[RMDB]
RNA sequence: GGGAACGACUCGAGUAGAGUCGAAAAUUUAAUCUGAAAUGCUGCCACCUACGUAGCUAGAGAUUAAUUGGAUACUGUCUGAAAAAUUAUUUGAGCACCUCAGAGACAGAGUCUAAGUAAACAGAAAGUGGUGUUAAUAAAGUAGAGACAAAUUAUGCAUUACCUGAGGGUUCGCCCUCAGGUAAUGAAAAGAAACAACAACAACAAC
Reactivity to DMS in 0.01 (KOAc 150mM, MgCl2 10mM, bicine 150mM(pH8.5), 24C), signal-to-noise 1, nucleotides 027 to 156: u000u000u000a000a040u000c030u000g020a060a130a200u000g000c010u010g000c010c170a100c090c090u010a060c130g000u000a020g070c030u050a240g000a100g000a040u010u000a040a090u000u010g000g170a140u000a040c220u000g000u000c000u020g000a060a110a070a110a110u000u000a130u000u000u000g000a140g000c040a060c000c000u000c010a150g010a150g060a060c030a010g000a300g000u000c030u010a030a110g000u000a030a060a230c070a060g030a060a110a140g010u000g000g000u000g000u000u000a040a110u010a040a030a130g000u000a130g000a140g000a170c080a010a140a110u000u000a200u030g000
Reactivity to 2A3 in 0.01 (KOAc 150mM, MgCl2 10mM, bicine 150mM(pH8.5), 24C), signal-to-noise 1, nucleotides 027 to 156: u080u050u000a000a000u000c000u050g030a020a080a160u090g010c000u000g000c040c080a110c030c050u130a110c030g040u020a000g020c000u000a020g030a010g000a110u010u010a040a050u090u040g000g000a000u030a190c040u030g000u030c020u030g070a080a060a110a110a020u270u170a200u090u160u060g020a000g040c030a030c000c010u030c040a020g000a000g010a060c000a010g030a040g060u000c020u020a100a100g050u010a080a140a160c010a060g070a180a200a040g020u010g000g010u000g020u040u000a060a070u080a130a080a040g080u040a000g040a020g030a100c000a040a070a040u150u160a080u300g020